[RMDB]
RNA sequence: GGGAACGACUCGAGUAGAGUCGAAAAGCUGUGUAUCGCAGGGCUCGAUCAGUGGGAGUAGGCUCAGGUCGAUUGCUCUAUUGGUUUGGUCUGUGUCCUGGUUGCUCGCUGAGAGUAAAACCAAUGGCUAAAUAUUUAUUUUCGAAUAAAUAUUUAGAAAAGAAACAACAACAACAAC
Reactivity to DMS in 0.01 (KOAc 150mM, MgCl2 10mM, bicine 150mM(pH8.5), 24C), signal-to-noise 5, nucleotides 027 to 126: g000c000u000g010u000g000u000a030u020c040g000c240a030g000g010g000c000u000c060g000a080u000c020a030g020u010g010g010g000a050g000u020a010g000g000c020u000c040a040g010g020u000c020g010a060u020u010g010c050u000c140u030a070u010u020g010g000u000u010u010g010g000u010c020u000g010u010g010u020c010c020u000g000g020u020u020g000c000u000c010g010c080u010g010a070g000a130g000u020a040a030a070a070c030c020a050a070u020g010g010
Reactivity to 2A3 in 0.01 (KOAc 150mM, MgCl2 10mM, bicine 150mM(pH8.5), 24C), signal-to-noise 4, nucleotides 027 to 126: g010c000u000g000u010g020u060a040u080c030g000c030a000g000g020g000c000u010c020g040a070u010c000a010g020u030g000g030g020a060g120u130a010g030g000c000u010c020a010g000g020u000c000g030a080u010u160g010c010u010c010u060a080u050u110g010g020u010u030u060g010g000u000c000u000g020u000g050u080c000c000u040g090g060u120u160g040c010u000c000g020c040u050g020a020g000a000g010u090a000a030a020a020c010c010a020a060u070g030g000
Notes
Structure probing data (DMS and 2A3) for a 177-nucleotide construct. The data come from the RNA Mapping Database (RMDB), library OK1LIB. Reactivities are rounded to 0.1 and cut off at 0 and 3. The reactions ran in a buffer of 150 mM KOAc, 10 mM MgCl2 and 150 mM bicine (pH 8.5), at 24 C. Reactivities are given for positions 27 through 126.